[RMDB]
RNA sequence: GGGAACGACUCGAGUAGAGUCGAAAAGAUAUGGACCAGGCCACUACUGAUGACCUUUCUCGGAAACGAGAAAGCAAGGUAUGUGGAACUACCUGGUCCUAAGUCAAAAGUAUGCUUCGGCAUACAACGUUUUGAGUAAGUUCGCUUACUCAAAACGAAAAGAAACAACAACAACAAC
Reactivity to DMS in 0.01 (KOAc 150mM, MgCl2 10mM, bicine 150mM(pH8.5), 24C), signal-to-noise 4, nucleotides 027 to 126: g010a070u000a300u000g030g000a000c010c010a000g000g010c010c000a020c000u000a000c010u010g000a120u020g010a160c300c000u000u000u010c000u000c000g010g010a130a100a180c010g010a010g000a000a000a010g000c030a070a070g020g030u000a020u010g000u010g010g000a060a010c040u010a300c010c000u000g000g000u000c010c000u000a020a060g000u010c070a080a090a150a140g020u000a010u000g000c010u000u030c290g030g010c010a000u010a000c010a080a220
Reactivity to 2A3 in 0.01 (KOAc 150mM, MgCl2 10mM, bicine 150mM(pH8.5), 24C), signal-to-noise 2, nucleotides 027 to 126: g040a020u100a060u180g000g000a010c010c000a010g000g030c000c010a010c000u020a020c000u040g120a300u170g020a280c020c000u000u000u020c000u000c000g020g070a070a070a050c010g000a000g030a000a000a010g010c020a040a100g020g000u040a060u300g010u020g000g040a010a020c040u200a030c010c000u010g010g000u010c000c000u010a010a010g010u010c010a000a000a000a110g000u010a000u010g000c010u050u120c300g180g010c020a010u020a000c000a040a000
The record gives the reactivity of an RNA of 177 nucleotides to DMS and 2A3. The reactions ran in a buffer of 150 mM KOAc, 10 mM MgCl2 and 150 mM bicine (pH 8.5), at 24 C. For 2A3 the reverse transcriptase was SuperScript II with manganese.